[RMDB]
RNA sequence: GGGAACGACUCGAGUAGAGUCGAAAAUGUGCAGCAGCACCCAAGGGUGGGGUUGUUCGCCCAUUAAAGGGGAACGUGAGCUGGGUUUAGACCGUCGUGAGACAGGUUGGUUGCUAUCUAAUGGAUGCGUGUGCACAGUAUUCGUACUGUGCACACGAAAAGAAACAACAACAACAAC
Reactivity to DMS in 0.01 (KOAc 150mM, MgCl2 10mM, bicine 150mM(pH8.5), 24C), signal-to-noise 2, nucleotides 027 to 126: u030g000u010g020c060a140g010c100a090g000c040a110c020c040c010a110a190g010g010g010u030g000g010g000g050u030u000g020u010u000c010g010c000c000c000a070u000u000a070a080a150g000g010g000g020a080a060c070g030u000g050a060g010c050u010g000g000g000u000u020u000a150g000a050c010c020g010u010c010g000u010g000a080g020a020c080a150g000g000u000u010g010g020u000u000g000c020u020a060u000c050u050a080a090u010g000g030a090u020g010
Reactivity to 2A3 in 0.01 (KOAc 150mM, MgCl2 10mM, bicine 150mM(pH8.5), 24C), signal-to-noise 3, nucleotides 027 to 126: u110g040u020g030c040a030g000c010a000g000c010a180c000c000c000a040a080g130g010g090u200g000g020g000g050u070u040g000u080u000c040g190c000c010c020a040u220u230a130a040a040g010g000g000g000a040a030c080g050u060g020a010g010c070u030g010g000g000u010u010u070a080g020a010c010c020g030u040c030g010u090g060a080g000a050c060a070g070g020u000u040g000g020u040u030g000c010u050a070u100c020u080a020a170u120g140g020a060u140g040
An RNA of 177 nucleotides, treated with DMS and 2A3 and read out base by base. Reactivities are rounded to 0.1 and cut off at 0 and 3. Reactivities are given for positions 27 through 126. The RNA was probed in 150 mM KOAc, 10 mM MgCl2 and 150 mM bicine (pH 8.5) at 24 C. 2A3 adducts were read by reverse transcription with SuperScript II with manganese.